[RMDB]
RNA sequence: GGGAACGACUCGAGUAGAGUCGAAAACAAAAACACCUUCUAUUUUCUCCAUUCCAAAACUUGACUAUUUAGCUGUCUACGGAUGCAAAAAGCUUAAGAGCCUUUCCAGCAACAAAACAAAACAAAACGCAGUACAUGUCUUCGGACAUGUACUGCGAAAAGAAACAACAACAACAAC
Reactivity to 2A3 in 0.01 (KOAc 150mM, MgCl2 10mM, bicine 150mM(pH8.5), 24C), signal-to-noise 2, nucleotides 027 to 126: c070a030a110a000a020a040c070a070c010c000u070u050c070u040a200u080u000u000u000c070u000c020c010a030u030u070c030c010a000a000a060a230c040u120u080g030a000c000u020a060u160u050u010a040g010c040u010g000u000c010u040a050c050g100g010a020u040g070c070a000a080a060a100a000g010c000u100u170a270a000g000a010g200c000c040u020u050u000c000c000a000g110c000a010a000c010a000a240a040a000c000a000a110a020a000c120a030a070a010a000